[RMDB]
RNA sequence: GGGAACGACUCGAGUAGAGUCGAAAAUUGACCAGGGGUAUUUGUCGUCCACAGGUGCUGCAACCGACCUAGCCGGGAGCCAUCCGUCGCGCACAUCACCACUGCUGGCUCCUUCGGGUACCACAGCCAAGCUCCUCGCCGAGGCCGUCUACAAGACCCACCCAUGAUUGUUCGCAAUCAUGGGUGGAAAAGAAACAACAACAACAAC
Reactivity to 2A3 in 0.01 (KOAc 150mM, MgCl2 10mM, bicine 150mM(pH8.5), 24C), signal-to-noise 1, nucleotides 027 to 156: u070u030g030a080c010c000a070g000g020g010g040u070a150u090u130u050g020u040c060g000u010c060c000a050c020a150g010g070u020g030c020u050g000c050a030a180c010c020g080a110c030c000u070a030g100c100c000g030g000g000a010g000c030c010a050u090c020c020g020u080c090g000c000g050c030a010c020a180u060c040a080c060c010a010c050u020g070c050u010g000g000c010u060c010c000u050u070c050g000g000g000u000a020c010c070a000c090a040g000c000c030a010a000g000c000u070c010c000u050c100g090c050c060g010a040g070g010c010c010g020u030c010u060a070c000a170a000g020a160c000

The record gives the reactivity of an RNA of 207 nucleotides to 2A3. Conditions: 150 mM KOAc, 10 mM MgCl2 and 150 mM bicine (pH 8.5), 24 C. It was measured as part of the RMDB library ARCHII.